[RMDB]
RNA sequence: GGGAACGACUCGAGUAGAGUCGAAAAGCAGUGACGCCUACACUUAUAUGCAGACCAUGUUGGACAAUCCCUUUGUGCAGAAAUGGAUCACAUUAGGGCGCAGGGAGAAAGAGACUCUCUCUAUUGCUCACACUGAAUCUUUCGAGAUUCAGUGUGAAAAAGAAACAACAACAACAAC
Reactivity to 2A3 in 0.01 (KOAc 150mM, MgCl2 10mM, bicine 150mM(pH8.5), 24C), signal-to-noise 1, nucleotides 027 to 126: g010c000a000g030u000g120a030c020g000c010c010u080a050c100a030c080u180u130a160u000a020u240g100c030a010g000a010c000c000a050u040g010u030u080g050g000a010c030a010a090u060c030c040c000u010u040u030g040u020g060c040a020g000a070a170a010u120g030g040a110u110c040a010c000a110u050u100a110g040g040g000c030g000c070a000g000g000g060a020g040a020a070a030g090a020g020a070c010u020c020u000c000u000c010u030a110u090u250g040c010
Reactivity to DMS in 0.01 (KOAc 150mM, MgCl2 10mM, bicine 150mM(pH8.5), 24C), signal-to-noise 3, nucleotides 027 to 126: g020c030a030g040u000g010a130c060g020c010c010u000a090c100a110c140u010u010a090u000a110u000g010c050a090g000a050c010c040a020u010g000u010u000g010g000a070c110a030a060u000c050c070c110u010u010u010g010u000g000c030a060g000a070a100a070u020g010g000a140u000c030a110c030a060u000u000a070g000g000g000c070g030c190a040g010g000g010a060g010a000a080a120g000a170g000a100c060u000c020u000c010u000c000u000a060u010u000g000c120
Structure probing data (2A3 and DMS) for a 177-nucleotide construct. For DMS, 2,027 sequencing reads were counted. The data come from the RNA Mapping Database (RMDB), library OK2TST. Conditions: 150 mM KOAc, 10 mM MgCl2 and 150 mM bicine (pH 8.5), 24 C. 2A3 adducts were read by reverse transcription with SuperScript II with manganese.